Structure probing data (DMS) for a 177-nucleotide construct. The data come from the RNA Mapping Database (RMDB), library M2PK50.
RNA sequence: GGGAACGACUCGAGUAGAGUCGAAAAGGUCUAACCUUCGGGUUAGACCAAAAUAAGAGCAAAGCGUAGCUCAGCUGCAAACGCAAAAAGCAGCAAAGCGAAAAACCCGCCAGUUCGCUGGCGGGAACAAGACAAAAAAGUUCGCUUUUUUGUCUUGAAAAGAAACAACAACAACAAC
Reactivity to DMS in 0.01 (KOAc 150mM, MgCl2 10mM, bicine 150mM(pH8.5), 24C), signal-to-noise 2, nucleotides 027 to 126: g000g020u010c000u000a010a000c000c000u000u010c210g030g000g020u000u000a010g010a000c000c000a000a020a070a050u020a090a150g000a020g030c030a180a080a130g010c030g020u010a180g010c000u000c020a150g020c000u000g020c010a020a100a130c230g020c250a070a100a070a100a150g010c000a010g020c000a050a040a040g030c050g010a050a080a120a050a100c000c000c020g000c000c000a020g000u000u010c180g030c000u000g000g000c000g020g010g000a000a000